The data come from the RNA Mapping Database (RMDB), library OK2TST. Chemical mapping of a 177-nucleotide RNA with 2A3 and DMS. High 2A3 reactivity points to a flexible backbone, as in loops and unpaired stretches. Values are in units of 0.01, from 0 to 300, in steps of 10. The reactions ran in a buffer of 150 mM KOAc, 10 mM MgCl2 and 150 mM bicine (pH 8.5), at 24 C. DMS (dimethyl sulfate) methylates the pairing face of unpaired adenines and cytosines.
RNA sequence: GGGAACGACUCGAGUAGAGUCGAAAACGAGGCGAACGCGUACCCGGUGACGGUGCGCAGUUGCGGGCGCGACGUCACGUUCGAGCGUGCGCCGGCGCGCGCGGUGAGCAACGACGUGAACCUCACAAUCCGUGCACGUAUUCGUACGUGCACGGAUAAAAGAAACAACAACAACAAC
Reactivity to 2A3 in 0.01 (KOAc 150mM, MgCl2 10mM, bicine 150mM(pH8.5), 24C), signal-to-noise 1, nucleotides 027 to 126: c060g000a010g000g000c020g020a040a020c010g010c010g050u100a090c030c010c000g060g020u030g020a020c020g000g000u030g010c030g000c050a030g000u040u100g010c080g010g070g060c020g000c000g020a030c010g010u160c040a000c000g040u120u140c050g020a070g070c000g010u010g000c040g000c010c020g120g000c020g030c010g020c040g000c000g090g100u140g010a050g000c040a030a020c010g130a010c020g000u000g040a010a020c000c000u040c020a070c040a020
Reactivity to DMS in 0.01 (KOAc 150mM, MgCl2 10mM, bicine 150mM(pH8.5), 24C), signal-to-noise 1, nucleotides 027 to 126: c090g020a030g000g000c030g010a230a030c010g020c000g010u000a120c060c020c010g000g000u020g020a060c070g010g010u000g010c000g000c000a040g020u000u000g050c200g030g030g050c000g000c000g010a020c030g000u000c000a040c000g000u010u020c100g010a110g000c000g010u000g020c010g030c000c050g010g010c070g000c010g000c020g020c050g020g000u000g010a080g000c040a120a070c050g000a180c050g010u000g010a150a060c040c010u000c010a090c280a150
Background
The DMS profile rests on 1,290 reads. 2A3 adducts were read by reverse transcription with SuperScript II with manganese.